[RMDB]
RNA sequence: GGGAACGACUCGAGUAGAGUCGAAAAGUAAAUCCAGGCUCAACCAAAAGUAACUGCGAACAACAUCGUUCCUUUCGCUCGUAAGGCUGCUCCUGUAGCUGCUUAAACGCCACAAACUUUCUGGCUCGAGCGUCUAGUCGUAGACUCCGUUAAUACGCAAUAAGAUCCACUUCGGUGGAUCUUAUUGAAAAGAAACAACAACAACAAC
Reactivity to DMS in 0.01 (KOAc 150mM, MgCl2 10mM, bicine 150mM(pH8.5), 24C), signal-to-noise 2, nucleotides 027 to 156: g040u000a120a080a120u000c060c050a200g040g020c030u030c020a060a120c070c030a060a090a060a130g000u000a100a110c030u010g040c030g020a080a060c130a100a150c060a100u010c020g000u000u000c000c000u000u000u000c040g020c020u000c030g000u000a180a220g020g010c030u000g000c000u000c040c100u010g020u020a080g040c010u000g000c010u000u000a080a080a130c020g050c020c040a050c050a120a060a080c110u000u000u000c050u000g020g010c010u000c010g000a100g030c010g000u000c020u000a070g020u000c090g000u010a070g000a080c040u000c010c000g010u000u010a090a150u000a080c070g050
Reactivity to 2A3 in 0.01 (KOAc 150mM, MgCl2 10mM, bicine 150mM(pH8.5), 24C), signal-to-noise 3, nucleotides 027 to 156: g040u040a000a110a050u080c070c040a030g020g000c000u020c050a050a070c020c030a100a080a040a060g000u050a100a120c000u080g020c040g040a030a020c040a050a010c000a190u040c010g030u000u010c000c000u010u010u010c020g000c010u000c010g050u030a060a020g010g020c010u020g000c000u030c020c090u150g120u190a000g000c030u020g000c000u030u030a120a130a040c060g020c060c030a060c080a080a210a080c080u070u220u070c070u070g000g000c010u010c010g000a010g010c000g010u000c010u040a030g030u020c010g020u010a060g000a120c030u040c070c000g020u040u070a130a030u070a140c040g010